[RMDB]
Chemical mapping of a 177-nucleotide RNA with 2A3 and DMS. DMS adducts were read by reverse transcription with MarathonRT.
RNA sequence: GGGAACGACUCGAGUAGAGUCGAAAAUUAUCGGGCCUUUGCAAUAGUUGCCAACGACAACUUUGCUCCGGUGGCUGUCGCCGCGUAAGCGGUGCCAAAAACCGACCUAAAGUCCUAGCGGGUAGCACUAAUCGAAUGAAUUCGUUCAUUCGAUUAGAAAAGAAACAACAACAACAAC
Reactivity to 2A3 in 0.01 (KOAc 150mM, MgCl2 10mM, bicine 150mM(pH8.5), 24C), signal-to-noise 9, nucleotides 027 to 126: u160u080a090u130c030g000g020g000c010c000u060u080u080g000c010a020a060u060a270g010u000u010g010c040c070a100a050c090g140a080c010a010a000c000u030u010u010g010c000u040c040c020g010g010u010g010g000c030u010g020u030c000g000c010c000g000c010g020u040a140a010g000c000g000g000u010g010c010c000a020a020a010a010a010c010c010g040a060c010c010u100a120a050a010g020u010c010c010u020a030g030c040g030g090g030u060a020g030c020a000
Reactivity to DMS in 0.01 (KOAc 150mM, MgCl2 10mM, bicine 150mM(pH8.5), 24C), signal-to-noise 8, nucleotides 027 to 126: u030u020a070u010c080g010g000g000c050c050u010u010u010g000c010a030a020u030a010g020u000u000g010c040c060a120a130c300g020a200c030a000a010c010u000u000u000g010c010u010c170c050g010g010u000g000g000c300u000g000u000c000g010c000c000g000c000g000u060a110a150g010c000g020g010u000g000c030c020a010a030a270a130a030c020c000g000a120c090c060u010a060a080a080g010u000c010c000u000a070g020c090g000g010g000u010a060g010c100a300